Chemical mapping of a 207-nucleotide RNA with 2A3 and DMS. The reactions ran in a buffer of 150 mM KOAc, 10 mM MgCl2 and 150 mM bicine (pH 8.5), at 24 C. For 2A3 the reverse transcriptase was SuperScript II with manganese.
[RMDB]
RNA sequence: GGGAACGACUCGAGUAGAGUCGAAAAAAGAAAGUCCUUGAUUCAUGCAAAAUUCAUUUAGCUUAUCGUUUUCAAGGUGAGCAAGAAAACAUAACACAAAUCAAAGCUGAUAAUGCAGUGAAUGAGGCAUCUUCUAGGUGAUAUUUCAGGCAGAAGAGCGAGCUAAAUUAUUCGUAAUUUAGCUCGCAAAAGAAACAACAACAACAAC
Reactivity to 2A3 in 0.01 (KOAc 150mM, MgCl2 10mM, bicine 150mM(pH8.5), 24C), signal-to-noise 4, nucleotides 027 to 156: a000a000g110a010a030a010g090u080c020c000u010u030g110a030u010u030c030a010u020g000c010a030a010a050a190u090u090c060a080u090u140u170a040g000c010u040u030a050u110c080g030u010u000u020u110c060a090a010g070g010u100g060a050g060c060a050a060g030a030a070a010a010c040a020u160a150a050c060a000c060a080a160a030u130c040a130a080a000g020c000u010g020a020u020a090a020u080g000c010a060g090u010g030a010a010u020g010a010g020g010c000a030u020c020u050u000c020u040a050g030g020u030g040a030u020a100u170u200u070c040a040g070g000c030a010g040a040a000g030a040
Reactivity to DMS in 0.01 (KOAc 150mM, MgCl2 10mM, bicine 150mM(pH8.5), 24C), signal-to-noise 1, nucleotides 027 to 156: a000a040g000a130a020a060g020u000c120c000u010u010g000a110u000u000c060a040u070g020c030a010a060a270a130u010u000c010a100u010u000u000a170g010c000u000u000a010u000c070g000u010u010u000u000c160a090a170g040g020u040g000a050g000c030a090a140g010a100a050a050a040c070a100u000a100a030c100a050c130a050a100a050u000c050a040a020a000g000c110u000g000a060u010a050a090u000g090c000a040g000u000g010a050a050u000g010a120g040g030c050a100u020c000u000u000c030u000a040g050g110u000g010a160u000a030u010u000u010c050a030g010g000c050a050g010a090a130g010a170